[RMDB]
RNA sequence: GGGAACGACUCGAGUAGAGUCGAAAAACAGAAAAAAGGAGUUUAAAUUAGAUUUGCAAACGGACGGUACUAAAUCCCGUCACUUUUACGUCUAACUUAUCGUUAACUCUGCAAAAAGAAAACAAGAAAAACAAGCGUGAGUUCGCUCACGCUUGAACUAUAUCCGACGGUUCGCCGUCGGAUAUAGAAAAGAAACAACAACAACAAC
Reactivity to 2A3 in 0.01 (KOAc 150mM, MgCl2 10mM, bicine 150mM(pH8.5), 24C), signal-to-noise 1, nucleotides 027 to 156: a010c010a030g240a050a020a000a060a010a080g000g000a010g010u090u100u130a060a060a100u030u000a000g000a000u060u090u200g060c030a040a000a080c070g030g000a010c000g000g100u050a010c040u180a060a070a070u030c000c000c000g000u000c000a180c010u120u090u080u190a010c030g000u030c010u010a010a010c000u050u070a030u130c040g080u040u030a000a000c000u030c030u050g000c040a040a040a000a000a000g070a000a110a030a010c090a000a020g130a070a170a020a000a000c000a000a000g000c010g000u000g000a010g010u020u140c220g000c180u040c000a000c000g000c000u000u000g000a000a000